The record gives the reactivity of an RNA of 207 nucleotides to 2A3.
Reactivities are rounded to 0.1 and cut off at 0 and 3.
Conditions: 150 mM KOAc, 10 mM MgCl2 and 150 mM bicine (pH 8.5), 24 C.
For 2A3 the reverse transcriptase was SuperScript II with manganese.
[RMDB]
RNA sequence: GGGAACGACUCGAGUAGAGUCGAAAAGUCAUGCCUUCGGGCAUGACAGGUACCGAGAGGUACCAAAUAGCGUACAGAAGACUCAGACUGUACGCUAAAAAAGUGUGUGUUCAAUAAGUGCCAAUUGAACACACACUAAAAUGGUGCAAGAGUGUUACAUCACCAUCCUGUUCGCAGGAUGGUGAUGAAAAGAAACAACAACAACAAC
Reactivity to 2A3 in 0.01 (KOAc 150mM, MgCl2 10mM, bicine 150mM(pH8.5), 24C), signal-to-noise 2, nucleotides 027 to 156: g000u000c010a020u000g000c000c000u060u080c120g030g000g000c010a000u000g000a000c010a000g000g000u000a000c010c010g050a040g000a030g080g000u000a000c000c020a030a010a000u060a000g000c000g000u000a000c000a020g060a060a000g010a200c100u030c160a060g030a090c000u000g000u000a000c000g000c000u050a020a000a000a000a000a000g010u000g000u000g020u000g000u020u000c000a020a000u150a160a090g060u050g200c060c020a020a010u000u000g000a000a010c000a000c010a000c000a000c010u000a000a000a000a020u180g050g000u150g040c070a140a100g020a000g110u030g050u060u030a020